Structure probing data (2A3 and DMS) for a 177-nucleotide construct. The RNA was probed in 150 mM KOAc, 10 mM MgCl2 and 150 mM bicine (pH 8.5) at 24 C. The 2A3 profile rests on 2,258 reads.
RNA sequence: GGGAACGACUCGAGUAGAGUCGAAAAGGUUGCCUGAAGUAGAAGGAAAUCUCCUCUCUACCUUAAUGGGAAGGGAAAUUUACUACCUCAGUCAGUGGGAGGAGAAGGGAAGAGGGGAAAUAAGGGACGUCCGUCAUUAUUUCGAUAAUGACGGACGAAAAGAAACAACAACAACAAC
Reactivity to 2A3 in 0.01 (KOAc 150mM, MgCl2 10mM, bicine 150mM(pH8.5), 24C), signal-to-noise 4, nucleotides 027 to 126: g090g000u070u110g110c020c000u000g050a060a020g040u110a040g040a140a010g080g080a000a090a060u010c010u000c020c010u030c010u010c020u050a100c010c020u100u100a100a120u240g020g010g020a030a050g040g010g060a030a020a030u060u060u020a060c040u040a040c000c010u020c010a020g060u060c010a010g040u060g040g030g040a090g050g020a130g050a060a040g030g010g000a060a140g030a040g060g020g030g000a030a060a130u230a050a030g050g010g010a020
Reactivity to DMS in 0.01 (KOAc 150mM, MgCl2 10mM, bicine 150mM(pH8.5), 24C), signal-to-noise 2, nucleotides 027 to 126: g030g010u000u040g000c030c010u010g000a000a060g010u010a040g010a140a150g030g020a050a180a130u000c040u000c000c030u000c030u000c020u060a120c100c040u020u020a100a190u060g000g000g030a150a150g000g000g000a060a170a090u020u080u010a060c020u010a010c150c000u010c020a070g000u000c300a080g000u010g030g000g010a050g000g000a040g000a100a040g030g000g010a080a080g010a080g040g020g000g000a020a080a030u010a040a120g020g000g000a110